[RMDB]
The data come from the RNA Mapping Database (RMDB), library OK2TST.
The record gives the reactivity of an RNA of 177 nucleotides to DMS and 2A3.
For DMS the reverse transcriptase was MarathonRT.
The reactions ran in a buffer of 150 mM KOAc, 10 mM MgCl2 and 150 mM bicine (pH 8.5), at 24 C.
RNA sequence: GGGAACGACUCGAGUAGAGUCGAAAAAGAAGCCAAUGGUCCCGAGCAGUACGUACUCUCGUUUGAUGCCUGUAAAAGGUCUAUGUCAGCCGGUCCCUACAGCCUCUCAUAUGAGUUUAACCCGGAACACAGUAAGCAACUUCGGUUGCUUACUGUGAAAAGAAACAACAACAACAAC
Reactivity to DMS in 0.01 (KOAc 150mM, MgCl2 10mM, bicine 150mM(pH8.5), 24C), signal-to-noise 2, nucleotides 027 to 126: a200g010a070a080g030c040c050a050a060u010g030g040u000c010c020c040g000a160g020c050a070g010u020a060c130g020u000a060c050u000c010u000c080g000u000u010u000g010a110u000g020c000c020u000g000u010a050a070a080a030g010g030u000c120u010a050u010g030u000c060a100g010c030c030g010g000u000c030c010c020u000a080c120a070g010c050c010u010c020u010c040a140u030a160u000g020a060g010u000u000u010a120a240c010c000c000g020g010a070a130
Reactivity to 2A3 in 0.01 (KOAc 150mM, MgCl2 10mM, bicine 150mM(pH8.5), 24C), signal-to-noise 1, nucleotides 027 to 126: a000g050a000a030g030c020c050a000a060u030g020g000u070c040c030c000g000a030g020c070a010g000u140a020c030g050u050a030c020u050c000u000c060g080u060u160u070g090a080u050g050c020c020u030g050u170a000a230a000a000g030g000u000c020u060a080u060g070u070c020a010g050c030c010g010g000u000c010c000c010u040a040c040a030g020c000c030u020c010u020c020a040u010a130u290g020a000g000u020u030u080a000a030c000c000c000g060g000a040a030